The data come from the RNA Mapping Database (RMDB), library RNAMAK. The record gives the reactivity of an RNA of 207 nucleotides to 2A3. 2A3 adducts were read by reverse transcription with SuperScript II with manganese. The 2A3 profile rests on 1,210 reads. The RNA was probed in 150 mM KOAc, 10 mM MgCl2 and 150 mM bicine (pH 8.5) at 24 C.
RNA sequence: GGGAACGACUCGAGUAGAGUCGAAAACGCUGGGAUCCUCGGGGACAUGCUGUGUACUGAAGCGCGCACGGUACUCAGCAACAGCUCUCUAGCGUGGGAUCCUGUGCUGAAGCGCGCACGGCAACCGAAAGGUGCGAAUCAAGCUUUCGAGCUUGAAGUGAGCACCAUGGUUCGCCAUGGUGCUCACAAAAGAAACAACAACAACAAC
Reactivity to 2A3 in 0.01 (KOAc 150mM, MgCl2 10mM, bicine 150mM(pH8.5), 24C), signal-to-noise 2, nucleotides 027 to 156: c010g010c020u050g030g000g020a010u000c010c040u010c090g000g010g020g000a020c010a130u100g050c000u010g000u000g000u000a010c000u020g040a220a080g000c000g000c000g020c000a020c040g000g000u010a000c000u000c020a020g020c020a030a000c040a010g020c020u040c050u050c100u180a050g100c040g120u170g000g000g010a000u000c020c010u020g080u070g000c040u140g030a070a040g000c000g020c000g000c000a000c000g160g000c060a070a140c040c010g070a050a040a060g000g010u010g000c000g030a030a090u020c010a010a000g000c020u060u050u170c160g120a000g000c000u000u030g010a190a030